RNA sequence: GGGAACGACUCGAGUAGAGUCGAAAAGCGGCAAAUGAUAUGGACCUGACCCAGACCGCAGCUAGGCUUGGACCUCGGAAACGAGCUAGCCUUGAAAAAAUUCUGCAGGUCCUAAGUCUGAACACAACUCCUUACAUAGGUUCGCCUAUGUAAGGAGAAAAGAAACAACAACAACAAC
Reactivity to DMS in 0.01 (KOAc 150mM, MgCl2 10mM, bicine 150mM(pH8.5), 24C), signal-to-noise 3, nucleotides 027 to 126: g030c030g020g020c140a070a060a090u010g000a090u000a150u000g010g010a030c040c030u000g020a180c060c080c040a120g000a080c060c020g000c100a110g010c070u000a010g010g000c000u000u000g010g000a090c220c000u000c000g010g010a060a060a170c030g000a030g000c040u000a010g000c050c000u000u000g010a020a030a050a100a080a110u010u010c030u010g040c080a020g020g010u000c000c000u010a010a050g000u000c040u010g010a060a050c170a050c170a120a160
Reactivity to 2A3 in 0.01 (KOAc 150mM, MgCl2 10mM, bicine 150mM(pH8.5), 24C), signal-to-noise 1, nucleotides 027 to 126: g070c080g070g000c080a020a120a240u270g100a150u140a070u300g080g010a080c020c030u050g110a130c000c080c000a010g030a080c030c040g020c060a020g090c090u090a010g010g000c000u060u070g060g090a140c020c010u020c030g010g000a070a020a020c000g010a020g000c000u040a020g060c060c000u000u040g080a140a010a010a010a000a040u150u090c060u140g040c120a030g000g010u030c000c000u000a040a010g010u000c080u180g220a280a000c100a010c020a140a260

Conditions: 150 mM KOAc, 10 mM MgCl2 and 150 mM bicine (pH 8.5), 24 C. This 177-nucleotide RNA was probed chemically with DMS and 2A3. For DMS, 2,789 sequencing reads were counted. For 2A3 the reverse transcriptase was SuperScript II with manganese.